About this RNA:
Source: RMDB library 15KREP, as collected in RNAgym. This 177-nucleotide RNA was probed chemically with 2A3 and DMS. The reactions ran in a buffer of 150 mM KOAc, 10 mM MgCl2 and 150 mM bicine (pH 8.5), at 24 C.
RNA sequence: GGGAACGACUCGAGUAGAGUCGAAAACAACUGUUAUCUUGCCACUGCAUUGUUAACACUCCAACAAAUAGAGUUGAAGUUUAAUCCACCUGCUCUACAAAGAGCUGGUGAAGCUGCUAACUUUUGUCAUAUAAGUGUCGUUCGCGACACUUAUAUGAAAAGAAACAACAACAACAAC
Reactivity to 2A3 in 0.01 (KOAc 150mM, MgCl2 10mM, bicine 150mM(pH8.5), 24C), signal-to-noise 2, nucleotides 027 to 126: c000a000a030c060u050g040u160u040a110u050c020u020u100g060c050c040a140c120u080g000c010a050u110u020g060u100u020a040a000c010a020c050u040c010c000a020a030c030a050a210a080u230a060g050a010g010u010u040g030a060a010g000u050u040u160a040a050u030c040c000a010c010c010u000g020c000u000c010u010a110c050a030a300a020g000a000g010c020u020g020g000u000g010a010a000g040c000u100g000c010u040a040a070c000u080u060u030u130g070u070
Reactivity to DMS in 0.01 (KOAc 150mM, MgCl2 10mM, bicine 150mM(pH8.5), 24C), signal-to-noise 2, nucleotides 027 to 126: c080a060a100c170u000g010u000u000a070u000c060u000u010g000c000c120a060c140u010g010c080a050u010u000g000u000u000a040a050c100a070c020u010c040c030a040a060c080a060a120a140u000a090g020a100g000u010u000g020a040a010g010u000u000u000a100a110u010c150c000a010c020c000u010g020c000u000c000u000a110c300a080a070a070g000a000g000c000u000g010g000u000g000a030a040g020c060u000g000c080u000a050a060c030u000u010u000u000g010u000